[RMDB]
RNA sequence: GGGAACGACUCGAGUAGAGUCGAAAAGAAAGAAAGAAGCGAGCUGGCGCAGCCGCACGGGCAACCGUCAAUCCAGCACUUCACAAGUCUUGUCGUUCUGACAGGACAUCCAUGAACCCACCGGGAAAAAAGGACUACAGCUUCGGCUGUAGUCCAAUCAGAAUGAUACCUUCGGGUAUCAUUCUGAAAAAGAAACAACAACAACAAC
Reactivity to 2A3 in 0.01 (KOAc 150mM, MgCl2 10mM, bicine 150mM(pH8.5), 24C), signal-to-noise 1, nucleotides 027 to 156: g020a000a070a030g130a060a080a040g030a040a000g000c080g020a000g000c030u010g060g000c030g070c130a080g110c130c050g010c090a040c020g020g000g020c020a000a050c010c000g020u000c000a000a070u030c000c010a030g020c030a020c030u020u040c040a070c030a190a070g000u000c010u000u020g010u000c000g060u230u080c110u300g000a000c000a000g070g000a000c020a010u000c020c020a030u050g140a100a140c090c000c000a080c050c150g060g000g120a060a140a040a060a100a000g010g000a040c000u000a000c000a010g020c000u040u200c270g150g000c000u000g000u010a000g000u000c000c020a000a000
Structure probing data (2A3) for a 207-nucleotide construct. Values cover nucleotides 27 to 156. For 2A3, 464 sequencing reads were counted. The RNA was probed in 150 mM KOAc, 10 mM MgCl2 and 150 mM bicine (pH 8.5) at 24 C.